RNA sequence: GGGAACGACUCGAGUAGAGUCGAAAACUUAGUGAGUUCGCUCACUAAGGGACACUGGAACCCAGGCUGGAGAGGGACCAAGUAGGAGGCUGGGCACCACCAACAUUCAGCGCUUCGGCGCUGAAAAGUUGGGGCGAUAUUUCGAUAUCGCCCCAACAAAAGAAACAACAACAACAAC
Reactivity to DMS in 0.01 (KOAc 150mM, MgCl2 10mM, bicine 150mM(pH8.5), 24C), signal-to-noise 1, nucleotides 027 to 126: c000u000u010a030g010u000g000a010g030u010u000c250g060c000u000c000a000c000u020a010a010g000g000g010a150c210a100c140u000g010g000a090a120c000c000c000a050g010g000c050u000g010g010a040g000a080g030g010g010a140c020c040a050a110g010u030a080g000g020a100g000g010c070u010g020g020g020c080a060c040c040a090c100c030a040a040c080a100u010u000c000a000g000c010g010c000u000u010c140g020g010c000g040c010u000g000a000a000a030a130
Reactivity to 2A3 in 0.01 (KOAc 150mM, MgCl2 10mM, bicine 150mM(pH8.5), 24C), signal-to-noise 1, nucleotides 027 to 126: c000u000u000a000g000u010g010a020g010u080u090c160g050c130u000c020a000c000u000a000a000g020g000g020a020c060a000c120u070g080g040a090a060c010c000c020a040g060g030c030u040g030g040a100g010a080g100g020g000a030c000c040a090a050g070u040a100g080g080a020g040g000c000u000g000g020g080c020a030c000c020a050c000c010a000a060c000a050u000u030c000a010g000c010g000c020u000u060c190g160g000c010g010c000u000g010a000a000a000a010